[RMDB]
RNA sequence: GGGAACGACUCGAGUAGAGUCGAAAACGCAGGUGUAGCGCAGAGCACCGCACUGUCAUGUCUCAGGGUGAUGACUUUGCACGAUGACUGCAAGCAGGGCAUUGCAGACUGCGGAGGCAUUCCAGCCCAUGGACGCGUGAUUCGUCACGCGUCCAUGAAAAGAAACAACAACAACAAC
Reactivity to DMS in 0.01 (KOAc 150mM, MgCl2 10mM, bicine 150mM(pH8.5), 24C), signal-to-noise 2, nucleotides 027 to 126: c040g000c010a010g000g030u000g010u010a100g020c070g000c010a030g010a040g000c030a030c020c030g020c030a030c030u010g000u010c070a110u010g000u020c120u000c020a050g000g000g020u000g000a020u000g010a120c000u010u000u000g000c010a040c030g010a170u020g000a200c030u010g000c050a050a040g010c040a220g000g000g010c050a150u000u000g010c000a040g020a170c040u010g000c010g000g020a180g010g010c060a060u020u010c020c010a060g030c050c030
Reactivity to 2A3 in 0.01 (KOAc 150mM, MgCl2 10mM, bicine 150mM(pH8.5), 24C), signal-to-noise 2, nucleotides 027 to 126: c020g000c010a030g040g070u080g030u210a050g050c050g000c060a000g020a010g060c000a020c020c010g060c000a010c020u010g040u100c030a190u150g220u140c020u000c080a010g140g000g020u050g050a070u030g140a240c000u000u070u040g000c020a010c060g050a090u190g100a030c000u000g020c010a010a010g030c060a090g040g170g000c120a170u050u020g000c030a020g060a160c030u020g020c020g020g020a050g000g030c020a010u080u010c000c000a020g020c000c010

The record gives the reactivity of an RNA of 177 nucleotides to DMS and 2A3. For DMS, 1,975 sequencing reads were counted. 2A3 adducts were read by reverse transcription with SuperScript II with manganese. Source: RMDB library OK2TRN, as collected in RNAgym.